[RMDB]
RNA sequence: GGGAACGACUCGAGUAGAGUCGAAAAACAAUAAGUCGAGCUUAUUAUCUUGCUAGGAAGAGUUCCAUAUAAGUCGUAGUAUGAUUGUAUGUAGCUGUAUAAGCGUUCUUUACUGCAUUUAUUGCAAGGAUUAUCGUAAGUAUUAAUAUAAAGGUUCGCGUUCGUGAAGAUUCGUCUUCACGAACGCAAAAGAAACAACAACAACAAC
Reactivity to 2A3 in 0.01 (KOAc 150mM, MgCl2 10mM, bicine 150mM(pH8.5), 24C), signal-to-noise 1, nucleotides 027 to 156: a000c060a060a070u130a090a000g050u010c070g010a090g110c000u030u050a010u180u050a040u150c090u160u110g000c030u060a090g040g020a010a010g030a000g010u100u100c070c060a000u040a000u000a060a070g060u050c080g030u020a070g060u050a110u190g040a020u000u000g020u000a010u090g030u060a030g010c010u000g040u130a140u040a200a000g020c000g010u080u000c040u070u130u040a050c020u070g030c000a050u000u060u210a060u220u070g020c000a000a000g010g020a060u070u110a030u250c010g040u000a030a030g000u010a020u090u030a170a070u160a040u220a140a040a000g060g000u030u090c060